This 177-nucleotide RNA was probed chemically with 2A3 and DMS. As a SHAPE reagent, 2A3 marks flexible, mostly unpaired nucleotides at the ribose 2'-OH. DMS adducts were read by reverse transcription with MarathonRT. Source: RMDB library OK2TRN, as collected in RNAgym. High DMS reactivity at an A or C suggests that its Watson-Crick edge is free. The reactions ran in a buffer of 150 mM KOAc, 10 mM MgCl2 and 150 mM bicine (pH 8.5), at 24 C. Values are in units of 0.01, from 0 to 300, in steps of 10.
RNA sequence: GGGAACGACUCGAGUAGAGUCGAAAACGAGCAUCAUGGUCUAGAUCAUGCUAGCGUACGGAUCCGAUCUGAUCCCAUGCUAGAUCUAUAGUGAGUACGCACGCACAUGCUCGAUCGUCGGAUCGGAACUGGACGAAUUAUUCGUAAUUCGUCCAGUAAAAGAAACAACAACAACAAC
Reactivity to 2A3 in 0.01 (KOAc 150mM, MgCl2 10mM, bicine 150mM(pH8.5), 24C), signal-to-noise 5, nucleotides 027 to 126: c010g010a010g000c010a000u070c020a050u080g020g010u030c070u120a120g020a200u070c010a020u060g050c030u080a050g010c000g020u010a010c020g060g060a050u000c010c000g020a030u000c020u030g020a040u050c000c000c000a030u100g030c000u050a050g020a100u010c060u090a130u030a050g050u050g070a030g000u020a010c030g020c030a020c030g080c020a050c020a090u010g000c000u000c020g020a150u130c050g090u010c010g020g000a010u010c010g010g000a020
Reactivity to DMS in 0.01 (KOAc 150mM, MgCl2 10mM, bicine 150mM(pH8.5), 24C), signal-to-noise 7, nucleotides 027 to 126: c010g020a030g020c010a030u000c070a030u010g010g010u000c090u010a110g000a060u000c050a060u000g010c140u000a150g010c010g010u000a030c040g010g010a100u000c000c040g010a020u010c030u010g000a090u000c010c010c010a110u010g000c030u000a030g010a070u020c120u010a100u010a060g010u000g010a110g010u000a040c060g020c020a140c180g010c130a100c170a040u000g000c010u010c000g000a060u010c140g000u000c020g010g010a020u000c000g000g010a080